[RMDB]
An RNA of 207 nucleotides, treated with DMS and 2A3 and read out base by base.
For 2A3, 1,180 sequencing reads were counted.
The RNA was probed in 150 mM KOAc, 10 mM MgCl2 and 150 mM bicine (pH 8.5) at 24 C.

RNA sequence: GGGAACGACUCGAGUAGAGUCGAAAAAGAACACUCCUGUUGGCAUUUGAUAACACCAAGGUAAAUUCACCCUUAUUAAUUGAUAUAUAUUGUUUAAGUGCUCAUGGGCCACUGUAACUAUACUCAUACUGAUUACAUGAAGGUUUACUGAAAUCGACUCUUACAUUCAAUUCGUUGAAUGUAAGAGAAAAGAAACAACAACAACAAC
Reactivity to DMS in 0.01 (KOAc 150mM, MgCl2 10mM, bicine 150mM(pH8.5), 24C), signal-to-noise 2, nucleotides 027 to 156: a120g000a100a110c020a220c060u000c030c020u000g000u010u000g000g020c000a090u000u030u000g010a170u000a080a070c050a060c070c030a110a130g050g020u000a050a050a110u010u020c040a110c010c000c020u000u000a070u000u000a040a070u010u000g000a130u000a100u000a060u000a060u000u010g000u000u000u000a130a040g000u000g010c000u010c080a060u000g020g000g050c010c030a050c020u000g010u000a060a050c020u000a070u010a100c090u000c100a060u000a080c040u010g020a070u020u000a070c130a040u010g010a060a060g030g010u000u000u010a120c040u010g000a030a070a090u030c020g030a210
Reactivity to 2A3 in 0.01 (KOAc 150mM, MgCl2 10mM, bicine 150mM(pH8.5), 24C), signal-to-noise 3, nucleotides 027 to 156: a000g050a010a000c010a010c020u050c020c000u040g040u080u030g070g000c060a070u020u000u300g080a110u170a100a040c030a010c060c030a040a030g030g020u030a060a050a150u120u100c020a130c000c000c000u040u090a100u080u140a170a100u140u050g000a000u060a050u040a030u020a100u240u050g020u040u030u010a080a000g010u040g010c000u030c050a030u090g010g030g080c060c030a000c040u010g010u020a030a000c010u030a020u100a080c040u030c070a010u050a180c020u050g060a090u050u120a040c020a050u100g080a080a010g050g030u090u120u120a070c040u020g090a040a100a030u190c050g070a070